An RNA of 177 nucleotides, treated with DMS and 2A3 and read out base by base. The data come from the RNA Mapping Database (RMDB), library OK1LIB. 2A3 adducts were read by reverse transcription with SuperScript II with manganese. Conditions: 150 mM KOAc, 10 mM MgCl2 and 150 mM bicine (pH 8.5), 24 C. The 2A3 profile rests on 6,111 reads. For DMS, 8,319 sequencing reads were counted.

[RMDB]
RNA sequence: GGGAACGACUCGAGUAGAGUCGAAAAUAAUGGUGGGAUUACUGUGUAAAUGCAAGUGCCGUCGUAAACCCAAAGCAAAGAACUUAAAGGCAAACUCUUCUGGAGAUGAGAUGAGCCCUAAUGAGAGUGCUACCAUACAAUUCGUUGUAUGGUAGCAAAAAGAAACAACAACAACAAC
Reactivity to DMS in 0.01 (KOAc 150mM, MgCl2 10mM, bicine 150mM(pH8.5), 24C), signal-to-noise 4, nucleotides 027 to 126: u030a090a050u000g010g000u010g000g010g030a050u000u010a030c010u010g020u020g010u020a080a040a110u140g000c040a020a000g010u010g000c010c000g020u010c030g010u010a040a080a120c010c000c000a050a090a110g010c260a060a080a060g000a100a070c060u020u020a030a180a100g000g010c050a040a060a100c090u000c000u020u020c050u020g000g020a110g010a080u000g000a020g010a060u000g000a300g000c030c010c020u000a040a070u030g000a060g000a080g000
Reactivity to 2A3 in 0.01 (KOAc 150mM, MgCl2 10mM, bicine 150mM(pH8.5), 24C), signal-to-noise 6, nucleotides 027 to 126: u190a010a080u100g030g030u070g080g060g000a020u020u050a030c000u010g020u030g080u160a060a120a110u300g020c010a030a020g010u020g060c000c000g010u020c010g000u010a050a180a170c000c000c030a060a030a010g110c110a120a160a020g000a080a040c020u070u140a150a040a000g030g000c030a060a020a040c010u020c010u120u000c050u170g180g080a250g020a110u090g020a040g050a140u060g030a010g020c010c010c020u170a120a110u210g050a070g020a020g100